[RMDB]
RNA sequence: GGGAACGACUCGAGUAGAGUCGAAAACAACUGUUAUCUUGCCACUGCAUUGUUAACACUCCAACAAAUAGAGUUGAAGUUUAAUCCACCUUCUCUACAAAGGGCUGGUGAAGCUGCUAACUUUUGUACAGCGCUAAGUUCGCUUAGCGCAAAAGAAACAACAACAACAAC
Reactivity to 2A3 in 0.01 (KOAc 150mM, MgCl2 10mM, bicine 150mM(pH8.5), 24C), signal-to-noise 6, nucleotides 027 to 129: c020a030a030c020u020g010u090u030a070u120c050u040u110g030c010c030a100c070u100g020c020a070u100u020g030u060u040a060a030c030a010c050u000c030c000a010a040c030a020a220a100u260a000g090a020g040u000u020g030a040a010g020u020u010u090a060a080u030c030c000a000c010c010u040u020c040u000c020u070a080c070a030a130a070g030g010g000c040u020g010g010u040g030a020a000g010c010u090g000c010u030a010a060c000u060u030u020u040g050u020a060c050a060
Reactivity to DMS in 0.01 (KOAc 150mM, MgCl2 10mM, bicine 150mM(pH8.5), 24C), signal-to-noise 3, nucleotides 027 to 129: c070a000a000c050u000g050u060u020a000u030c000u070u030g030c020c090a180c180u060g030c070a040u020u050g020u090u000a050a040c000a110c080u040c060c020a080a020c110a120a170a150u000a050g030a090g010u000u000g000a000a000g030u060u010u020a050a050u090c080c020a000c030c030u010u000c000u000c010u000a080c300a000a000a000g000g000g000c110u040g020g060u060g020a040a100g030c050u070g000c070u050a060a040c030u040u010u020u010g070u000a050c190a050
Structure probing data (2A3 and DMS) for a 170-nucleotide construct. For 2A3, 11,402 sequencing reads were counted. The RNA was probed in 150 mM KOAc, 10 mM MgCl2 and 150 mM bicine (pH 8.5) at 24 C. It was measured as part of the RMDB library 15KLIB.